The record gives the reactivity of an RNA of 177 nucleotides to DMS and 2A3.

RNA sequence: GGGAACGACUCGAGUAGAGUCGAAAAGGAUCCUCUCACAGGAUUGUCUCUGUGUUCCGAAACUCCAACAGUAUUGGUUCGGGACACCUACAUCAAUACUGUAGGUAUAGAGAGUAGGAGAGGAUCGGUGAGCCUUUUAGUUCGCUAAAAGGCUCACAAAAGAAACAACAACAACAAC
Reactivity to DMS in 0.01 (KOAc 150mM, MgCl2 10mM, bicine 150mM(pH8.5), 24C), signal-to-noise 2, nucleotides 027 to 126: g050g020a000u000c000c000u000c000u000c010a190c180a110g030g010a180u000u010g020u000c020u000c000u010g030u010g040u010u000c000c000g000a000a050a110c260u010c080c010a020a070c120a160g000u010a300u000u010g010g010u000u000c060g000g000g010a000c030a020c000c010u000a000c000a010u000c030a120a040u000a070c300u000g000u010a010g010g030u000a130u010a000g010a060g010a010g000u010a160g000g000a030g000a000g000g010a000u010c030g010
Reactivity to 2A3 in 0.01 (KOAc 150mM, MgCl2 10mM, bicine 150mM(pH8.5), 24C), signal-to-noise 1, nucleotides 027 to 126: g010g000a000u000c010c000u000c000u000c010a180c080a130g150g110a200u120u270g120u040c010u000c000u000g050u000g000u060u000c010c000g020a040a060a060c140u100c070c020a020a020c110a240g180u110a140u100u060g040g040u000u000c000g000g000g000a010c000a000c000c000u000a000c010a060u030c040a070a300u080a300c080u020g000u040a000g020g030u030a020u250a050g050a010g000a030g040u090a060g000g080a010g010a020g000g000a010u000c000g010
Values cover nucleotides 27 to 126. The reactions ran in a buffer of 150 mM KOAc, 10 mM MgCl2 and 150 mM bicine (pH 8.5), at 24 C.